[RMDB]
RNA sequence: GGGAACGACUCGAGUAGAGUCGAAAAGAAAGCGUCAUUCGACGAAUGAGAAGUUAAUGACGCAAAGAAAAACGUGCGCAACCUUCUCAGCGCACGACAAGAAAUCUCAUUCGCAGAAAUAAGAAAAAUUUACUGAUGGCUUCGGCCAUCAGUAAAUAAAAGAAACAACAACAACAAC
Reactivity to DMS in 0.01 (KOAc 150mM, MgCl2 10mM, bicine 150mM(pH8.5), 24C), signal-to-noise 2, nucleotides 027 to 126: g000a120a020a280g000c010g000u000c010a020u030u020c160g050a130c000g010a010a000u000g000a010g000a020a090g040u000u000a020a010u000g020a000c000g000c020a150a160a170g000a010a070a150a070a160c030g040u000g000c000g020c000a120a110c140c130u030u030c050u000c180a100g000c010g040c000a000c060g010a070c190a110a190g040a040a140a120u000c000u000c000a000u000u050c000g040c150a190g000a090a070a110u090a130a100g060a050a100a080a060
Reactivity to 2A3 in 0.01 (KOAc 150mM, MgCl2 10mM, bicine 150mM(pH8.5), 24C), signal-to-noise 2, nucleotides 027 to 126: g050a040a090a000g010c000g000u010c000a020u090u200c210g070a090c000g000a130a000u030g000a010g000a090a050g110u140u290a040a000u000g030a010c030g000c010a000a110a000g040a020a120a000a000a000c000g010u020g000c000g000c030a090a100c010c030u250u110c100u020c070a000g000c000g040c000a000c000g000a010c000a000a090g080a080a100a060u000c000u000c000a000u020u020c010g000c010a010g120a030a180a020u300a160a050g110a070a060a060a000
Conditions: 150 mM KOAc, 10 mM MgCl2 and 150 mM bicine (pH 8.5), 24 C. Chemical mapping of a 177-nucleotide RNA with DMS and 2A3. Reactivities are rounded to 0.1 and cut off at 0 and 3. For 2A3 the reverse transcriptase was SuperScript II with manganese. The DMS profile rests on 1,381 reads.